Structure probing data (DMS) for a 177-nucleotide construct.
RNA sequence: GGGAACGACUCGAGUAGAGUCGAAAAGAUAUGGAAUGGUGAAGUGACGCCCCAUUGUCAGGACCCUGACUCGGAAACGAGUCAGCGUCCUUGGAUUUAUGGGGCGUCAAUAAACCAUUCCUAAGUCCUCUUUAUGGUAGUUCGCUACCAUAAAGAGAAAAGAAACAACAACAACAAC
Reactivity to DMS in 0.01 (KOAc 150mM, MgCl2 10mM, bicine 150mM(pH8.5), 24C), signal-to-noise 4, nucleotides 027 to 126: g010a100u000a300u020g000g020a020a010u000g010g000u000g010a110a270g000u000g000a010c000g000c000c010c000c000a010u000u000g010u010c010a030g000g010a010c010c150c000u000g000a010c000u020c000g000g010a110a140a180c000g010a020g010u000c000a000g020c300g010u000c000c000u010u010g010g010a030u000u000u000a000u000g000g000g000g020c000g010u000c000a000a000u000a130a270a030c000c000a000u000u000c000c000u010a010a130g000u000c060